[RMDB]
RNA sequence: GGGAACGACUCGAGUAGAGUCGAAAAGGGCGAUCCUUCGGGAUCGCCCAAAUAAAGGCAGUCGAGUGCAAGAAGCACAGUCAAUAACUGACGCCACGUCAAAAAGUACAUGGUUCGCCAUGUACAACACUUAUAAUUAGUUCGCUAAUUAUAAGUGAAAAGAAACAACAACAACAAC
Reactivity to DMS in 0.01 (KOAc 150mM, MgCl2 10mM, bicine 150mM(pH8.5), 24C), signal-to-noise 7, nucleotides 027 to 126: g010g010g030c010g020a010u000c000c000u000u000c210g040g010g010a010u000c000g020c000c000c000a000a010a040u000a070a090a130g010g020c010a050g030u000c040g010a120g010u000g010c020a130a100g010a140a160g020c010a020c020a090g010u010c090a100a120u010a070a080c110u010g000a040c030g010c020c020a080c210g000u010c090a050a040a100a090a090g000u000a000c000a000u000g010g010u000u010c230g030c010c000a000u000g000u000a000c000a070a130
Reactivity to 2A3 in 0.01 (KOAc 150mM, MgCl2 10mM, bicine 150mM(pH8.5), 24C), signal-to-noise 6, nucleotides 027 to 126: g010g000g000c050g010a000u060c100c110u180u180c300g040g000g000a010u010c020g020c000c000c000a000a000a000u000a000a000a000g030g000c040a020g020u060c040g060a030g040u020g000c040a100a130g130a230a030g200c010a010c010a020g060u090c030a030a100u140a140a050c070u060g000a010c010g030c030c020a030c030g100u080c040a080a060a040a030a040g000u000a000c000a000u010g000g020u020u030c110g010c030c000a000u000g000u000a000c000a010a000
Source: RMDB library M2PK50, as collected in RNAgym.
An RNA of 177 nucleotides, treated with DMS and 2A3 and read out base by base.
Conditions: 150 mM KOAc, 10 mM MgCl2 and 150 mM bicine (pH 8.5), 24 C.
DMS adducts were read by reverse transcription with MarathonRT.
Values are in units of 0.01, from 0 to 300, in steps of 10.